[RMDB]
RNA sequence: GGGAACGACUCGAGUAGAGUCGAAAAUCAUUCGCAAUUAUUUUCAGUGCCAAAAAAUAAGUGCCACAUGAGACGCAAUUAUCUUUGCUUCUCACUUAUAUUUGCAUUUCAUUUUUUACCCACAACACCACCUCAGUCACUUCGGUGACUGAGGUGGAAAAGAAACAACAACAACAAC
Reactivity to 2A3 in 0.01 (KOAc 150mM, MgCl2 10mM, bicine 150mM(pH8.5), 24C), signal-to-noise 2, nucleotides 027 to 126: u030c010a000u090u050c060g050c030a000a110u200u030a110u030u110u020u090c030a100g040u040g180c030c030a040a190a010a030a000a000u080a130a000g040u050g060c040c000a070c000a050u060g010a010g000a000c010g000c000a000a000u100u060a100u300c140u050u020u020g000c010u000u000c000u030c000a010c020u070u070a040u010a010u100u060u110g030c020a000u000u000u100c000a050u000u060u060u080u110u100a170c010c040c000a050c040a130a000c010a020